[RMDB]
RNA sequence: GGGAACGACUCGAGUAGAGUCGAAAAACACAGCCCACUGAACAAGGUCUCAGGGGUAUUGCUAAGCCAAGAAGGAACUUUCCCACACUACUGAAUGGAAGCAGGCUGUCUUGUAAAAGCCCAGAUCUAACUCUCCGUCAUUCGUGACGGAGAGUUAAAAAGAAACAACAACAACAAC
Reactivity to 2A3 in 0.01 (KOAc 150mM, MgCl2 10mM, bicine 150mM(pH8.5), 24C), signal-to-noise 1, nucleotides 027 to 126: a000c030a030c010a010g030c030c000c030a090c040u030g010a030a030c070a300a100g150g010u080c030u000c070a000g010g020g010g020u040a150u040u060g030c060u090a120a090g010c020c010a020a060g050a030a050g160g040a040a060c020u010u070u060c000c030c000a010c010a000c010u230a050c040u050g070a050a070u100g020g010a060a000g000c000a010g020g000c010u030g020u090c100u140u130g080u100a140a080a010a100g000c000c000c000a020g040a000u040c010
Reactivity to DMS in 0.01 (KOAc 150mM, MgCl2 10mM, bicine 150mM(pH8.5), 24C), signal-to-noise 2, nucleotides 027 to 126: a110c100a100c100a070g030c010c000c020a150c030u000g010a050a050c050a140a040g030g020u000c120u000c030a050g000g010g000g030u010a030u000u010g040c030u020a130a130g000c040c040a010a070g000a150a130g010g040a080a080c160u000u010u000c000c010c020a080c190a030c100u000a070c040u010g020a110a110u000g000g010a110a050g000c050a100g010g020c030u010g000u000c060u000u000g020u000a050a080a060a120g020c000c010c000a130g000a070u000c070